Source information
Structure probing data (2A3 and DMS) for a 207-nucleotide construct. For 2A3 the reverse transcriptase was SuperScript II with manganese. It was measured as part of the RMDB library M2RFPK. Conditions: 150 mM KOAc, 10 mM MgCl2 and 150 mM bicine (pH 8.5), 24 C. The DMS profile rests on 1,837 reads. The 2A3 profile rests on 1,960 reads.
RNA sequence: GGGAACGACUCGAGUAGAGUCGAAAACAACACGUCCUCGUCGUACAGAGUGGUAACAUGUGUCACCACAUAUCCAAGCUUGGGUACACGGGCUUGACCCCACCCCUUGGGCGGAUGGUGGCACAUGAAAAGAAGUAACACUUCGGUGUUACUUCAACUCUUCAAGAUCCUUCGGGAUCUUGAAGAGAAAAGAAACAACAACAACAAC
Reactivity to 2A3 in 0.01 (KOAc 150mM, MgCl2 10mM, bicine 150mM(pH8.5), 24C), signal-to-noise 3, nucleotides 027 to 156: c050a000a030c030a020c050g080u040c010c000u030c020g100u040c050g060u090a080c080a050g050a000g040u070g040g130u230a100a030c000a000u000g000u000g020u010c010a010c010c000a030c020a070u220a040u080c000c000a000a020g000c080u120u080g010g000g040u190a080c070a050c090g050g010g000c060u170u300g110a300c010c000c000c000a010c000c000c000c000u000u000g010g000g000c030g060g000a100u020g000g000u000g020g040c000a010c010a000u010g000a000a000a000a020g000a000a000g010u010a030a000c000a000c000u050u070c250g070g000u000g000u000u000a000c000u000u000c000a000a010
Reactivity to DMS in 0.01 (KOAc 150mM, MgCl2 10mM, bicine 150mM(pH8.5), 24C), signal-to-noise 1, nucleotides 027 to 156: c030a070a060c060a070c050g020u000c010c020u010c000g030u000c090g030u010a160c130a130g010a130g050u000g000g050u010a050a210c000a020u000g050u000g000u010c030a060c000c010a070c090a130u000a090u030c000c020a030a270g000c080u010u010g030g060g020u000a070c100a110c110g040g050g040c000u010u000g000a210c000c000c020c210a090c040c000c000c030u000u000g010g030g080c110g010g020a090u010g000g030u000g040g000c020a040c010a030u000g000a030a120a070a160g000a050a030g000u000a010a000c000a030c000u000u030c270g080g020u010g000u000u010a030c000u000u000c010a020a150